[RMDB]
RNA sequence: GGGAACGACUCGAGUAGAGUCGAAAAUGAUCAAGGUGUCCAAAAAUAGUUAAUGUGGCUAAAUUGAGAUAGGUUAUGCUUCCAUCACAGUAUGCAUAUUGCAGUGGUGACAAUGAGACCUGUAACAACUUCACUUAUCCUUCGGGAUAAGUGAAGUAAAAGAAACAACAACAACAAC
Reactivity to DMS in 0.01 (KOAc 150mM, MgCl2 10mM, bicine 150mM(pH8.5), 24C), signal-to-noise 5, nucleotides 027 to 126: u020g000a070u020c060a070a050g010g010u010g010u010c050c020a030a080a090a110a120u020a040g010u010u010a080a130u030g000u010g000g010c040u010a030a050a070u000u010g010a090g000a040u000a020g000g010u000u000a060u030g000c080u010u020c060c000a020u000c020a010c020a060g010u020a070u000g010c090a100u020a100u010u010g010c010a030g010u000g000g010u000g000a050c210a030a050u010g010a140g000a030c010c010u000g000u010a040a080c150a060
Reactivity to 2A3 in 0.01 (KOAc 150mM, MgCl2 10mM, bicine 150mM(pH8.5), 24C), signal-to-noise 5, nucleotides 027 to 126: u080g010a050u040c020a020a030g050g010u040g030u070c020c030a010a010a030a010a070u140a090g090u110u110a130a060u250g070u100g070g000c020u030a040a100a110u070u070g030a050g020a060u070a080g010g000u070u020a050u180g030c020u090u000c020c010a000u010c020a010c020a030g220u230a070u110g030c040a040u090a170u300u190g000c000a010g000u020g020g020u020g040a050c050a010a050u110g000a000g030a060c000c000u020g040u050a070a010c040a030

Chemical mapping of a 177-nucleotide RNA with DMS and 2A3. Reactivities are given for positions 27 through 126.